RNA sequence: GGGAACGACUCGAGUAGAGUCGAAAAAAUGAAAGUUUUUUCACAUACUCUCUUAAAACCCAUGUUUUCAAUGAGGAAUUUGUGGUAAUAACUGGAGAGGCUACGUAAUUAGUUAAUAGGAAUUUAGAACACGCAAAAAAUUCGUUUUUUGCGUGUUAAAAGAAACAACAACAACAAC
Reactivity to DMS in 0.01 (KOAc 150mM, MgCl2 10mM, bicine 150mM(pH8.5), 24C), signal-to-noise 3, nucleotides 027 to 126: a010a020u000g000a170a090a110g000u010u000u000u000u000u000c000a110c090a110u010a090c020u000c000u020c070u000u000a080a090a170a100c250c020c040a030u000g010u020u000u000u000c030a140a100u010g020a140g000g000a040a010u000u010u000g020u020g010g010u000a010a050u030a020a070c280u000g010g000a050g000a030g000g000c080u010a030c100g000u010a050a050u010u010a060g000u010u020a050a050u030a100g010g010a060a060u000u010u010a070g000
Reactivity to 2A3 in 0.01 (KOAc 150mM, MgCl2 10mM, bicine 150mM(pH8.5), 24C), signal-to-noise 2, nucleotides 027 to 126: a000a030u210g080a090a050a010g010u020u050u050u050u040u000c000a010c000a050u210a040c000u000c000u020c010u050u030a050a070a110a120c000c000c000a020u040g030u000u000u000u080c100a160a110u260g060a030g220g000a060a060u050u000u080g090u140g030g020u060a170a050u010a060a070c200u080g040g000a000g000a020g000g000c010u090a000c030g040u050a090a110u040u070a040g090u120u080a040a030u060a110g070g100a090a150u060u090u030a000g000